[RMDB]
RNA sequence: GGGAACGACUCGAGUAGAGUCGAAAAGUAAGUACGCUGGGUGAUAGCUCGCACCCUUGAGCGUUGAAACUCUGAAGCGCGCACGGAGUGGAGCUCAAUGUGCUGCGAGGUCACCUGUGCUGAAGCGCGCACGGCAACCGAAAGGUGCGAUGGGAAACAUGUAUAGUCGCUUCGGCGACUAUACAUGAAAAGAAACAACAACAACAAC
Reactivity to 2A3 in 0.01 (KOAc 150mM, MgCl2 10mM, bicine 150mM(pH8.5), 24C), signal-to-noise 1, nucleotides 027 to 156: g120u130a090a050g040u050a060c010g000c000u030g000g000g010u000g020a010u060a070g300c010u000c010g030c000a000c000c020c000u010u010g000a000g000c000g110u200u010g000a000a000a000c010u030c000u020g110a170a080g010c020g010c000g000c010a010c020g010g000a010g000u000g010g020a000g000c000u000c000a010a000u030g040u060g050c280u010g000c020g010a000g000g030u000c000a000c000c000u010g000u000g010c000u000g020a130a010g000c010g000c000g010c000a000c000g000g020c000a000a000c000c000g020a070a020a060g010g000u020g020c030g030a100u130g090g000g000a120a140a020

This 207-nucleotide RNA was probed chemically with 2A3. The reactions ran in a buffer of 150 mM KOAc, 10 mM MgCl2 and 150 mM bicine (pH 8.5), at 24 C. For 2A3, 1,376 sequencing reads were counted.